Overview
Structure probing data (DMS and 2A3) for a 177-nucleotide construct. DMS (dimethyl sulfate) methylates the pairing face of unpaired adenines and cytosines. For 2A3, 26,313 sequencing reads were counted. It was measured as part of the RMDB library M2PK50. The RNA was probed in 150 mM KOAc, 10 mM MgCl2 and 150 mM bicine (pH 8.5) at 24 C.
RNA sequence: GGGAACGACUCGAGUAGAGUCGAAAAUUGUCCGGGUUCGCCCGGACAAAGCGGGAGGCGACCGGAGGCCACCUCCCAGGCGAUCCCACGCCUCGCUCCGGAGCGUGAUGACCUUCGGGUCAUCAAAGUGACUACACUAAUUCGUUAGUGUAGUCACAAAAGAAACAACAACAACAAC
Reactivity to DMS in 0.01 (KOAc 150mM, MgCl2 10mM, bicine 150mM(pH8.5), 24C), signal-to-noise 7, nucleotides 027 to 126: u000u000g000u000c000c000g010g010g010u000u010c240g020c010c010c000g000g010a000c000a000a010a090g000c170g000g000g000a030g000g010c030g020a140c020c010g000g000a030g010g010c210c070a060c000c000u000c000c000c010a020g010g010c010g010a080u000c010c000c010a300c020g000c010c000u000c090g000c010u000c000c000g000g000a250g010c230g000u010g000a010u000g000a010c000c000u000u010c200g010g000g010u000c000a000u000c000a030a060a090
Reactivity to 2A3 in 0.01 (KOAc 150mM, MgCl2 10mM, bicine 150mM(pH8.5), 24C), signal-to-noise 5, nucleotides 027 to 126: u050u020g000u000c010c000g000g010g010u040u040c220g070c020c000c000g010g010a000c000a000a010a000g020c010g000g010g000a010g010g010c030g100a250c020c010g010g020a010g030g030c220c050a000c000c000u000c010c000c000a000g000g000c010g000a030u020c000c000c010a010c000g000c000c010u010c040g010c010u000c000c000g010g010a030g060c100g080u080g010a000u000g000a000c000c000u030u030c270g090g000g000u000c000a000u000c000a000a010a000